[RMDB]
RNA sequence: GGGAACGACUCGAGUAGAGUCGAAAAGAUAUGGACUCGGCAGGACAUGCCUCAUUUCGGAAACGAAAUGGAAGGCAACAGCCUGGCCGAGUCCUAAGUCAAAUCAGCCGUCUUCGGACGGCUGAAACACGAUUAUUUCGUUCGCGAAAUAAUCGUGAAAAGAAACAACAACAACAAC
Reactivity to 2A3 in 0.01 (KOAc 150mM, MgCl2 10mM, bicine 150mM(pH8.5), 24C), signal-to-noise 1, nucleotides 027 to 126: g020a000u010a050u040g000g000a010c000u000c020g000g070c000a000g020g040a130c100a300u260g000c040c000u000c000a010u020u020u000c010g000g000a030a010a000c020g010a000a030a010u100g030g230a180a170g000g000c020a060a150c150a270g060c020c000u040g130g000c020c010g020a020g010u000c000c000u010a000a000g000u010c000a000a030a080u010c000a030g010c000c000g000u020c030u050u130c300g170g000a040c000g000g000c010u000g000a010a000a000
Reactivity to DMS in 0.01 (KOAc 150mM, MgCl2 10mM, bicine 150mM(pH8.5), 24C), signal-to-noise 1, nucleotides 027 to 126: g000a020u000a060u020g000g000a000c010u000c000g010g010c000a030g030g030a020c080a110u010g010c000c000u000c000a010u010u000u000c000g040g000a020a010a030c000g000a000a010a010u000g020g020a140a060g030g030c000a090a120c150a210g000c010c000u010g000g010c000c000g030a010g000u000c000c000u000a000a030g010u000c000a070a090a150u000c010a020g030c000c000g030u010c000u000u010c290g020g010a000c000g000g010c000u000g000a000a060a210